RNA sequence: GGGAACGACUCGAGUAGAGUCGAAAAACUAGUGCUACGGCACUAGAAAUAGUGUUCAGAACAAAGGACAUGUGUGUUCCCUGUGUGUGGAUGGUGUUCAGCAGCAGGGACAGAUGUGUUUACCAAAAUUCUGUACUUUCUUCGGAAAGUACAGAAUAAAAGAAACAACAACAACAAC
Reactivity to 2A3 in 0.01 (KOAc 150mM, MgCl2 10mM, bicine 150mM(pH8.5), 24C), signal-to-noise 9, nucleotides 027 to 126: a000c000u000a000g000u000g010c000u020a070c230g120g000c000a000c000u000a000g010a010a020a000u140a020g130u080g070u090u110c080a050g040a210a040c070a110a110a050g070g000a000c000a010u000g010u010g000u010g030u200u230c000c000c000u010g020u000g010u010g050u040g060g080a140u090g070g220u250g150u190u100c040a050g000c010a000g000c000a000g020g000g010a000c010a000g070a020u020g000u010g000u030u050u090a080c030c040a040a070a040
Reactivity to DMS in 0.01 (KOAc 150mM, MgCl2 10mM, bicine 150mM(pH8.5), 24C), signal-to-noise 5, nucleotides 027 to 126: a130c000u010a010g010u000g010c000u000a090c170g030g000c000a010c010u010a000g010a040a070a070u010a040g010u010g020u010u010c120a120g020a180a080c150a050a090a130g000g010a020c000a010u020g010u000g000u010g000u010u020c000c010c000u000g010u000g010u020g010u000g020g010a060u010g020g010u050g010u010u000c020a180g020c030a090g010c000a010g000g000g010a020c010a000g000a030u000g020u000g000u000u010u020a220c040c050a060a040a050
The record gives the reactivity of an RNA of 177 nucleotides to 2A3 and DMS. Conditions: 150 mM KOAc, 10 mM MgCl2 and 150 mM bicine (pH 8.5), 24 C. DMS adducts were read by reverse transcription with MarathonRT.